[RMDB]
RNA sequence: GGGAACGACUCGAGUAGAGUCGAAAAGUCCUUCCUCGCGCCCGCAGGACCACCCCUCGCCCCCUUUGCGCUGUCGCUUCGGCUACUACCCGGUGGAAACAACUGAAGCUCCCGAGAACCGCUUUUUCUCUAUCUUACUUGCUUCGGGGCGAGGGUGCAUAGUAAGACUGUUCGCAGUCUUACUAUGAAAAGAAACAACAACAACAAC
Reactivity to DMS in 0.01 (KOAc 150mM, MgCl2 10mM, bicine 150mM(pH8.5), 24C), signal-to-noise 2, nucleotides 027 to 156: g000u010c020c000u000u010c010c020u010c040g040c060g000c030c010c020g050c090a100g010g020a050c010c030a100c080c000c000c000u000c020g030c030c000c000c000c050u000u000u000g020c010g060c060u010g000u010c070g000c030u000u000c030g060g010c020u000a110c050u000a220c000c010c030g030g040u020g020g000a170a150a160c090a040a180c050u020g010a100a160g010c020u010c040c030c040g000a170g000a070a080c090c060g010c090u000u000u000u010u000c020u010c020u010a140u000c060u000u000a070c080u010u000g000c040u010u000c060g000g010g020g010c000g000a010g000g010g020u000g020
Reactivity to 2A3 in 0.01 (KOAc 150mM, MgCl2 10mM, bicine 150mM(pH8.5), 24C), signal-to-noise 2, nucleotides 027 to 156: g020u000c040c000u040u040c020c040u050c060g050c020g050c020c020c030g040c030a010g020g050a020c060c040a060c020c050c000c030u000c000g000c000c010c000c000c030u020u040u060g010c010g000c020u030g020u050c000g000c020u010u010c030g010g020c010u020a060c000u040a060c050c040c000g000g000u020g050g030a080a130a030c030a070a030c050u030g000a030a000g000c000u030c030c020c010g010a010g030a080a050c030c040g080c110u150u160u000u040u010c020u020c010u010a070u050c000u020u040a110c010u030u110g030c020u040u060c050g000g000g000g000c000g000a020g000g000g000u010g010
Structure probing data (DMS and 2A3) for a 207-nucleotide construct. Values are in units of 0.01, from 0 to 300, in steps of 10. For 2A3 the reverse transcriptase was SuperScript II with manganese. The RNA was probed in 150 mM KOAc, 10 mM MgCl2 and 150 mM bicine (pH 8.5) at 24 C. The 2A3 profile rests on 1,475 reads.